[RMDB]
RNA sequence: GGGAACGACUCGAGUAGAGUCGAAAAGAACCGCUGUGAGCGGAGUGAAAUAGAACCUGAAACCGUAUGUCUACAAAGUGUCAGAGCAGAGCAAUCUGCGAUGGCGUGCCUUUUGUUUAAUGAGUCUGUACGUGUAUUUGUUCGCAAAUACACGUACAAAAGAAACAACAACAACAAC
Reactivity to 2A3 in 0.01 (KOAc 150mM, MgCl2 10mM, bicine 150mM(pH8.5), 24C), signal-to-noise 1, nucleotides 027 to 126: g030a040a010c020c020g000c050u050g200u150g280a000g060c000g010g040a100g030u050g050a060a000a000u120a020g050a050a030c020c000u020g050a110a040a030c030c040g030u070a030u200g130u000c030u050a090c030a030a130a000g040u080g020u070c010a010g000a000g020c000a000g010a000g010c020a030a120u060c000u010g000c000g010a000u010g000g000c010g010u020g040c020c020u110u160u090u050g120u090u030u090a140a130u170g050a020g130u060c060u020
Reactivity to DMS in 0.01 (KOAc 150mM, MgCl2 10mM, bicine 150mM(pH8.5), 24C), signal-to-noise 2, nucleotides 027 to 126: g000a190a110c030c000g000c030u000g050u000g030a070g020c020g010g010a130g010u000g020a060a060a090u000a060g000a080a090c060c030u000g000a090a110a070c070c070g010u020a040u010g010u010c050u020a070c050a050a050a040g000u010g050u000c000a010g010a300g000c000a010g010a000g000c300a080a130u000c000u000g000c010g000a100u000g000g000c000g020u000g020c180c050u020u000u000u040g000u010u010u000a080a070u000g000a120g000u010c130u000
Notes: Chemical mapping of a 177-nucleotide RNA with 2A3 and DMS. The DMS profile rests on 994 reads. High 2A3 reactivity points to a flexible backbone, as in loops and unpaired stretches. For 2A3 the reverse transcriptase was SuperScript II with manganese. For 2A3, 924 sequencing reads were counted. For DMS the reverse transcriptase was MarathonRT. It was measured as part of the RMDB library RFMREP. The reactions ran in a buffer of 150 mM KOAc, 10 mM MgCl2 and 150 mM bicine (pH 8.5), at 24 C.